Notes:
Structure probing data (DMS and 2A3) for a 177-nucleotide construct. The RNA was probed in 150 mM KOAc, 10 mM MgCl2 and 150 mM bicine (pH 8.5) at 24 C. For DMS, 11,037 sequencing reads were counted. Source: RMDB library OK2TRN, as collected in RNAgym.
RNA sequence: GGGAACGACUCGAGUAGAGUCGAAAAAUAUCCUGCGUAACCGUGUAAACCAACUUGGCGUGGCGGAGCCGGUGGUUCAGCGUCAGGGUGCUGACCGUAUCGUUGUUGAACUGCCAGGUAUUCAGGACGAUCAUAAGUAGUUCGCUACUUAUGAUCGAAAAGAAACAACAACAACAAC
Reactivity to DMS in 0.01 (KOAc 150mM, MgCl2 10mM, bicine 150mM(pH8.5), 24C), signal-to-noise 7, nucleotides 027 to 126: a100u010a090u010c010c000u000g010c140g010u000a080a100c060c030g020u000g000u000a090a110a110c050c030a060a110c150u010u010g030g010c030g010u000g000g000c030g010g010a280g000c040c020g000g030u000g000g020u000u000c030a050g010c030g000u000c080a060g010g010g020u000g000c060u010g010a100c120c090g000u010a070u010c140g010u000u000g010u000u000g000a030a030c030u000g000c000c000a120g020g020u010a080u010u000c040a050g000g000a300
Reactivity to 2A3 in 0.01 (KOAc 150mM, MgCl2 10mM, bicine 150mM(pH8.5), 24C), signal-to-noise 4, nucleotides 027 to 126: a000u130a040u020c000c000u000g020c020g030u050a060a100c030c060g050u040g070u120a040a060a070c030c050a030a210c110u140u300g020g000c060g040u040g070g000c020g020g010a020g050c010c010g010g010u010g000g000u030u050c030a030g000c020g180u180c060a040g070g000g050u040g000c020u100g040a100c030c010g020u060a070u120c100g130u020u210g020u010u010g040a050a030c000u020g000c020c030a060g060g010u080a170u060u110c020a000g020g060a030